[RMDB]
RNA sequence: GGGAACGACUCGAGUAGAGUCGAAAAAUAACCACCAACAUCACCGUUAUCAGACUGACGUUGCAACGAAGGAAAUCCAAAUCUCAAUCGAACUGCUGAUAAUUGGAUAUUCGCAAUAGAACGAACCCACGUUGGGUAGUUUCGACUACCCAACGUGAAAAGAAACAACAACAACAAC
Reactivity to DMS in 0.01 (KOAc 150mM, MgCl2 10mM, bicine 150mM(pH8.5), 24C), signal-to-noise 2, nucleotides 027 to 126: a150u040a060a210c060c010a170c110c080a070a020c080a030u000c030a020c060c060g000u010u010a040u000c170a040g000a050c090u020g000a070c120g000u000u000g000c110a040a090c140g000a050a050g000g000a010a090a160u000c010c010a000a030a040u020c090u010c010a070a090u000c120g000a060a150c070u000g010c020u000g030a040u000a030a050u000u000g040g010a120u030a140u000u000c050g010c030a090a070u020a140g010a000a070c030g010a070a130c090c100
Reactivity to 2A3 in 0.01 (KOAc 150mM, MgCl2 10mM, bicine 150mM(pH8.5), 24C), signal-to-noise 1, nucleotides 027 to 126: a010u110a020a040c010c010a020c010c020a050a100c010a100u070c040a050c110c000g000u040u060a030u040c010a020g170a200c050u120g050a030c020g000u000u030g000c030a090a010c080g130a180a010g100g080a060a170a000u070c030c010a020a060a130u060c100u030c010a050a120u080c000g050a090a030c010u030g000c000u000g050a030u070a080a060u020u070g000g030a010u050a110u090u070c020g000c040a110a130u060a210g050a080a000c010g020a020a030c020c000

Structure probing data (DMS and 2A3) for a 177-nucleotide construct. 2A3 adducts were read by reverse transcription with SuperScript II with manganese. The 2A3 profile rests on 906 reads. Reactivities are given for positions 27 through 126. The reactions ran in a buffer of 150 mM KOAc, 10 mM MgCl2 and 150 mM bicine (pH 8.5), at 24 C. Source: RMDB library OK2TRN, as collected in RNAgym.